[RMDB]
RNA sequence: GGGAACGACUCGAGUAGAGUCGAAAAUACUACCCGGCCUCCCACCUCUCUGCCCGGAGCCGGCCGCCCGCCCAGAGACCCGGCCGGCUCCCACCGUCGCUUGGUCGACGACCCGCCGCGCCAACAACUUUUGUAUUACAUUCGUGUAAUACAAAAGAAAAGAAACAACAACAACAAC
Reactivity to DMS in 0.01 (KOAc 150mM, MgCl2 10mM, bicine 150mM(pH8.5), 24C), signal-to-noise 2, nucleotides 027 to 126: u000a120c090u000a130c030c020c000g020g010c030c020u010c030c020c030a150c040c030u000c020u000c030u000g010c030c080c090g010g010a000g040c020c010g000g020c000c010g030c070c040c050g020c040c030c040a180g010a120g000a080c080c130c040g010g010c000c010g010g020c020u010c000c010c070a030c110c030g010u000c030g010c030u000u000g000g010u010c020g000a050c030g000a090c040c010c020g020c040c020g010c040g000c020c030a050a040c080a080a150